Source: RMDB library OK2TST, as collected in RNAgym. Chemical mapping of a 177-nucleotide RNA with 2A3 and DMS. 2A3 adducts were read by reverse transcription with SuperScript II with manganese. The DMS profile rests on 5,601 reads. The RNA was probed in 150 mM KOAc, 10 mM MgCl2 and 150 mM bicine (pH 8.5) at 24 C. The 2A3 profile rests on 8,264 reads. Reactivities are given for positions 27 through 126.
[RMDB]
RNA sequence: GGGAACGACUCGAGUAGAGUCGAAAACGGAUGUUCACCGCGCCCGCCCCGGAGGCCCCGACCAACAUCAUCGACGACUUUGCCCAAAGAGCAAUGAGCAUGGUCAGGCAGGCGCCCGGGUACGCGGCAUCAUACAUCACUUCGGUGAUGUAUGAUGAAAAGAAACAACAACAACAAC
Reactivity to 2A3 in 0.01 (KOAc 150mM, MgCl2 10mM, bicine 150mM(pH8.5), 24C), signal-to-noise 5, nucleotides 027 to 126: c010g050g040a110u140g070u150u100c050a030c070c000g000c010g010c000c020c010g020c010c000c000c000g020g010a060g050g000c010c010c000c010g010a010c000c010a020a060c020a120u060c000a020u040c020g130a120c040g080a130c160u040u040u080g040c020c030c010a070a090a020g030a010g000c020a020a020u030g010a020g010c060a040u030g000g030u040c080a130g070g000c040a050g030g000c090g300c010c010c020g020g030g010u000a020c040g000c000g000g030
Reactivity to DMS in 0.01 (KOAc 150mM, MgCl2 10mM, bicine 150mM(pH8.5), 24C), signal-to-noise 5, nucleotides 027 to 126: c080g000g020a110u010g010u000u000c090a140c000c010g010c030g010c020c020c040g010c180c000c000c040g000g010a080g010g000c010c000c020c010g000a050c010c000a030a150c220a120u000c020a030u000c060g010a120c080g010a120c030u000u000u000g010c080c070c100a070a060a060g010a250g010c060a050a030u010g000a070g000c110a300u000g010g010u000c020a110g030g020c090a110g010g010c020g010c030c000c000g000g010g000u000a040c040g010c020g010g010